[RMDB]
RNA sequence: GGGAACGACUCGAGUAGAGUCGAAAAAAUCAUGUUUGUGACAAUAGUGAUUUGCAAGAACCUCAGGUUGUAGUUAGCCAGCCCAGUGAGGUGUUGACCACGAGCAUGUCUAUAGAGUGUCCAGUUUUAGAAAAUUCUGAGUGUAGUGUAGAGACUGUGUAUACGAAGUUUUCGAACUUCGUAUACAAAAAGAAACAACAACAACAAC
Reactivity to DMS in 0.01 (KOAc 150mM, MgCl2 10mM, bicine 150mM(pH8.5), 24C), signal-to-noise 3, nucleotides 027 to 156: a070a030u000c010a030u010g010u010u010u000g020u000g000a200c080a080a080u010a110g000u000g000a080u000u010u010g020c050a060a130g000a070a110c020c010u000c040a080g010g010u000u000g020u000a090g000u000u000a120g010c090c000a070g020c010c020c030a120g010u010g000a060g030g030u000g030u000u000g000a110c030c030a060c060g010a070g020c040a050u000g010u010c040u010a120u000a090g010a090g030u000g010u000c050c020a040g010u000u020u000u000a110g010a060a070a050a070u010u010c020u010g000a120g050u000g000u000a130g020u000g030u000a130g010a140g000a090c050u010g030
Reactivity to 2A3 in 0.01 (KOAc 150mM, MgCl2 10mM, bicine 150mM(pH8.5), 24C), signal-to-noise 3, nucleotides 027 to 156: a000a000u150c070a060u050g000u050u070u000g020u040g040a050c050a080a100u060a170g060u070g090a180u120u070u150g060c050a070a070g030a080a080c000c030u010c020a020g020g000u020u030g030u060a110g070u130u140a050g060c050c010a020g000c040c020c020a060g020u030g120a010g000g020u030g020u050u060g030a040c000c040a010c040g010a020g020c020a020u010g020u020c030u060a140u060a120g060a040g090u060g030u010c010c040a020g000u000u010u030u140a110g070a010a110a060a070u150u060c040u050g050a050g040u050g050u080a060g020u050g030u100a040g040a080g000a060c030u100g030
Chemical mapping of a 207-nucleotide RNA with DMS and 2A3. For DMS, 5,610 sequencing reads were counted. For 2A3, 1,083 sequencing reads were counted. The reactions ran in a buffer of 150 mM KOAc, 10 mM MgCl2 and 150 mM bicine (pH 8.5), at 24 C. For 2A3 the reverse transcriptase was SuperScript II with manganese. The data come from the RNA Mapping Database (RMDB), library OK3TST.